[RMDB]
RNA sequence: GGGAACGACUCGAGUAGAGUCGAAAAGGCAACGUUCAGAGGCUAUAGUUUACGAUCAACCAAGAAGCGAGGAUGUCAUGUUACACUCGGGAGUGAGGGUUUACAGUGUAUACAUCAAUAAUAAACCCACCGUUCAGCAAUUCGUUGCUGAACGGUGAAAAGAAACAACAACAACAAC
Reactivity to 2A3 in 0.01 (KOAc 150mM, MgCl2 10mM, bicine 150mM(pH8.5), 24C), signal-to-noise 3, nucleotides 027 to 126: g050g000c030a060a000c070g050u060u010c030a030g010a010g070g000c050u040a050u070a160g100u000u110u090a110c100g110a110u180c020a000a050c030c010a070a000g060a090a000g050c010g040a030g070g010a010u020g030u040c020a030u090g010u050u090a070c040a000c000u040c050g050g030g020a080g040u140g050a100g000g000g050u000u060u020a070c080a040g010u040g040u090a070u000a040c000a010u150c020a050a140u260a140a000u040a090a030a050c010c000
Reactivity to DMS in 0.01 (KOAc 150mM, MgCl2 10mM, bicine 150mM(pH8.5), 24C), signal-to-noise 2, nucleotides 027 to 126: g000g020c030a080a080c120g020u030u000c050a090g030a090g020g020c000u000a050u030a080g010u020u000u000a090c100g000a030u010c100a090a110c020c070a070a100g000a160a080g020c010g000a030g020g000a080u020g040u030c100a070u000g020u010u030a020c040a180c060u000c110g000g000g000a120g000u030g010a020g010g000g020u000u010u000a040c140a020g000u000g030u000a050u040a050c050a090u010c060a030a060u030a120a160u030a030a060a020c040c010
Chemical mapping of a 177-nucleotide RNA with 2A3 and DMS. For DMS, 2,681 sequencing reads were counted. For 2A3, 1,706 sequencing reads were counted.